[RMDB]
RNA sequence: GGGAACGACUCGAGUAGAGUCGAAAAGACGAUUAGAAAUGUGUAGCAUAACCGGGAAUGAGCUACACAGAUCCCGGAGGGAUCGGAGCUAUUAUACGAUAGCAGUUCAGAUUCCAACUCAUCGCAAGUCACCACUCAGGUUCGCCUGAGUGGUGGCAAAAGAAACAACAACAACAAC
Reactivity to DMS in 0.01 (KOAc 150mM, MgCl2 10mM, bicine 150mM(pH8.5), 24C), signal-to-noise 5, nucleotides 027 to 126: g020a080c010g000a030u000u000a020g020a050a050a110u000g000u000g010u010a030g000c010a110u030a140a090c060c070g020g020g020a140a150u010g000a100g000c000u000a000c000a010c000a010g000a110u000c010c010c000g020g020a200g010g000g010a000u000c010g010g000a070g010c000u010a010u000u000a070u040a150c280g000a060u000a010g000c020a080g020u020u020c030a100g010a030u000u010c010c010a040a210c020u000c040a040u000c000g020c040a150a120
Reactivity to 2A3 in 0.01 (KOAc 150mM, MgCl2 10mM, bicine 150mM(pH8.5), 24C), signal-to-noise 9, nucleotides 027 to 126: g060a030c010g010a010u010u040a020g070a060a110a040u020g010u000g000u010a000g000c040a060u070a300a110c030c030g050g030g060a080a160u220g080a080g010c000u000a000c000a000c000a010g010a010u020c010c000c000g010g030a060g000g000g000a000u000c010g010g000a020g000c020u000a020u040u060a180u080a140c180g020a020u010a010g000c020a020g060u070u030c010a040g000a010u010u000c000c000a010a050c010u010c020a010u010c000g000c030a060a050
Chemical mapping of a 177-nucleotide RNA with DMS and 2A3. The data come from the RNA Mapping Database (RMDB), library OK1LIB. As a SHAPE reagent, 2A3 marks flexible, mostly unpaired nucleotides at the ribose 2'-OH. The reactions ran in a buffer of 150 mM KOAc, 10 mM MgCl2 and 150 mM bicine (pH 8.5), at 24 C.